[RMDB]
RNA sequence: GGGAACGACUCGAGUAGAGUCGAAAAGAUAUGGAUACAGCGAUAAGCGUCCAUCGGAAACGAUGGAACGCUUUUGACGCUGAUCCUAAGUCAAAGAAGGUUUUAUCCUUCGGGAUAAAACCUUCAACCAUAUACGAAUGUUCGCAUUCGUAUAUGGAAAAGAAACAACAACAACAAC
Reactivity to 2A3 in 0.01 (KOAc 150mM, MgCl2 10mM, bicine 150mM(pH8.5), 24C), signal-to-noise 6, nucleotides 027 to 126: g010a010u090a010u110g010g020a040u270a300c000a010g010c010g030a060u040a260a010g000c000g020u000c000c000a000u000c010g010g020a090a020a010c000g000a000u000g010g000a040a020c000g000c000u010u010u020u040g080a030c020g000c010u000g000a000u010c000c000u010a080a030g030u020c050a120a040a160g000a000a000g000g000u020u000u000u010a010u000c010c010u040u110c300g000g010g000a000u000a000a000a000a000c000c000u000u000c000a000a000
Reactivity to DMS in 0.01 (KOAc 150mM, MgCl2 10mM, bicine 150mM(pH8.5), 24C), signal-to-noise 8, nucleotides 027 to 126: g010a030u000a240u010g000g010a010u000a130c010a010g000c000g020a130u000a020a020g030c000g010u000c000c000a010u000c000g020g000a080a050a110c010g010a010u000g000g000a020a020c000g020c000u000u000u000u000g010a190c040g020c000u010g000a070u000c000c000u000a040a120g000u000c020a070a110a130g010a010a010g010g000u000u000u000u000a000u000c010c000u000u010c220g020g000g000a010u000a000a000a010a000c000c000u000u000c000a040a120

The record gives the reactivity of an RNA of 177 nucleotides to 2A3 and DMS. 2A3 adducts were read by reverse transcription with SuperScript II with manganese. Values cover nucleotides 27 to 126. Source: RMDB library TTRDEL, as collected in RNAgym. DMS adducts were read by reverse transcription with MarathonRT.